[RMDB]
RNA sequence: GGGAACGACUCGAGUAGAGUCGAAAAAUGUAUGUUCUCAUACAGAAUUACAUAUGCACAUGUGGAAAUUGCCUAUAUUCAACACACAUGUGGGCAUUGCCUAUAUUCAACACAUAGCUGCUCAAAAGCCUCACGUGAGCUUCGGCUCACGUGAGGCAAAAGAAACAACAACAACAAC
Reactivity to 2A3 in 0.01 (KOAc 150mM, MgCl2 10mM, bicine 150mM(pH8.5), 24C), signal-to-noise 1, nucleotides 027 to 126: a000u000g000u000a120u000g160u080u130c210u000c060a000u000a140c000a000g050a000a040u300u000a000c010a000u000a080u110g000c000a000c000a000u000g000u000g000g000a000a000a120u300u150g140c090c030u270a230u000a200u120u200c050a300a000c000a000c000a000c000a050u000g010u040g010g000g000c000a000u160u160g080c000c010u300a300u050a080u200u000c020a020a000c000a000c000a080u040a000g000c000u120g000c000u000c240a000a270a000a000